RNA sequence: GGGAACGACUCGAGUAGAGUCGAAAACAGAUCGGUCCUGGAACCACGAUGGAAGACAUCCAGUUCCAGGCCGGUAGGCGAGACGUGGUGCGAGCAGUACGCCUGCGCCGACGCGAUGCCAUCGCAGGUAUUUAAACUACUUCGGUAGUUUAAAUACAAAAGAAACAACAACAACAAC
Reactivity to 2A3 in 0.01 (KOAc 150mM, MgCl2 10mM, bicine 150mM(pH8.5), 24C), signal-to-noise 9, nucleotides 027 to 126: c020a010g090a060u040c010g010g120u150c000c010u000g000g000a000a000c010c010a040c150g010a010u010g000g100a150a110g230a140c000a010u000c010c010a000g000u000u000c000c000a000g000g000c000c010g000g000u040a100g010g000c020g040a060g060a190c020g020u030g000g020u040g020c020g020a040g000c020a030g150u190a050c170g020c010c010u020g000c010g000c010c020g090a020c000g010c010g040a050u220g020c010c030a050u110c100g030c080a050g190
Reactivity to DMS in 0.01 (KOAc 150mM, MgCl2 10mM, bicine 150mM(pH8.5), 24C), signal-to-noise 9, nucleotides 027 to 126: c080a140g000a010u000c010g010g000u010c010c000u000g010g010a020a000c000c050a120c280g010a020u000g000g000a170a110g010a260c010a010u000c000c110a230g000u000u000c000c000a010g000g000c000c000g000g000u000a030g020g000c010g010a120g010a120c020g030u000g010g020u000g000c020g010a090g010c020a180g020u010a100c220g000c020c000u000g010c010g010c020c000g010a060c030g010c010g000a200u010g000c020c020a110u010c090g010c140a120g010

The record gives the reactivity of an RNA of 177 nucleotides to 2A3 and DMS.
As a SHAPE reagent, 2A3 marks flexible, mostly unpaired nucleotides at the ribose 2'-OH.
For 2A3, 30,600 sequencing reads were counted.